[RMDB]
RNA sequence: GGGAACGACUCGAGUAGAGUCGAAAACAAGAAAGUGAUGAUGAUGUGGAAAUCGCUUUCUUGAACUCGCAUUCCAAGGCGGAGAUUGUUGACAUGUUACGUAAACAUACGUAUAUCGAUGAGUUAGUCGAUUAGUGCGAUUCGUCGCACUAAUCGAAAAAGAAACAACAACAACAAC
Reactivity to DMS in 0.01 (KOAc 150mM, MgCl2 10mM, bicine 150mM(pH8.5), 24C), signal-to-noise 2, nucleotides 027 to 126: c010a010a010g000a000a010a000g050u000g000a000u000g000a250u000g040a030u010g030u010g050g000a060a190a040u010c000g000c000u010u000u000c010u010u000g000a050a100c070u000c020g050c070a110u020u000c020c010a110a110g010g030c010g000g010a070g000a180u030u010g040u000u000g030a110c160a080u000g000u030u000a020c050g020u000a080a130a100c300a080u020a050c020g000u000a020u000a100u000c040g000a100u010g010a100g010u000u000a040g040